[RMDB]
RNA sequence: GGGAACGACUCGAGUAGAGUCGAAAAGAAGGCACUUUCGAGUGCCUUCAUGGGGAGCUCUGGUCUCCCUCCCUUGCAAACUCCCUAAGGGAGGAGACCUAAUUAGGUGCACUUUCGAGUGCACCAAUAUUAGUAAGGGAUUCGUCCCUUACUAAUAAAAAGAAACAACAACAACAAC
Reactivity to 2A3 in 0.01 (KOAc 150mM, MgCl2 10mM, bicine 150mM(pH8.5), 24C), signal-to-noise 4, nucleotides 027 to 126: g000a000a000g010g010c040a010c020u080u080u200c290g100a010g000u000g000c000c000u020u000c000a010u020g000g000g000g010a100g030c100u070c270u300g060g000u000c010u030c030c020c000u000c000c000c000u000u000g040c080a120a100a220c060u110c010c010c010u070a020a030g020g000g000a000g000g020a000g000a010c000c010u030a080a100u110u150a060g000g010u000g020c000a000c010u070u060u140c290g090a010g000u000g000c000a000c000c000a000a000
Reactivity to DMS in 0.01 (KOAc 150mM, MgCl2 10mM, bicine 150mM(pH8.5), 24C), signal-to-noise 5, nucleotides 027 to 126: g010a020a010g000g010c000a000c000u000u000u020c160g010a020g030u000g000c000c000u000u000c000a070u010g000g000g000g010a300g010c300u000c280u000g010g020u000c000u000c060c020c020u000c000c000c000u000u000g000c190a080a090a170c130u000c020c020c020u000a030a030g000g010g000a040g010g000a020g000a010c010c010u000a050a080u010u010a090g010g010u000g000c000a010c000u000u000u000c160g010a020g010u000g000c000a000c000c000a020a020
About this RNA:
Structure probing data (2A3 and DMS) for a 177-nucleotide construct. For DMS, 8,863 sequencing reads were counted. Reactivities are given for positions 27 through 126. Conditions: 150 mM KOAc, 10 mM MgCl2 and 150 mM bicine (pH 8.5), 24 C.